Structure probing data (2A3) for a 177-nucleotide construct. The 2A3 profile rests on 551 reads. The reactions ran in a buffer of 150 mM KOAc, 10 mM MgCl2 and 150 mM bicine (pH 8.5), at 24 C. Source: RMDB library OK1LIB, as collected in RNAgym.
RNA sequence: GGGAACGACUCGAGUAGAGUCGAAAAUUCUCGUGCGUGUACACCGUCUCGAGUAUGUCGUAGACAUGGAAGUCCAGAGGGCUUCCGUGGGUGUCUGCCUCCGGCCUUGCCGUGCCCUCUUGGGCACCGCGUGCUCCGACUUCGGUCGGAGCACGCGAAAAGAAACAACAACAACAAC
Reactivity to 2A3 in 0.01 (KOAc 150mM, MgCl2 10mM, bicine 150mM(pH8.5), 24C), signal-to-noise 1, nucleotides 027 to 126: u080u000c010u000c000g040u070g020c060g040u020g000u030a010c050a050c070c050g070u020c000u030c050g130a130g030u100a210u130g120u020c030g090u110a090g000a070c000a000u070g030g000a020a000g000u000c010c040a170g050a200g060g000g060c000u000u000c000c000g000u000g000g020g010u010g030u100c050u030g000c000c000u000c010c060g060g000c010c000u030u200g000c000c130g050u050g000c000c000c000u130c020u150u270g000g000g020c000a000c010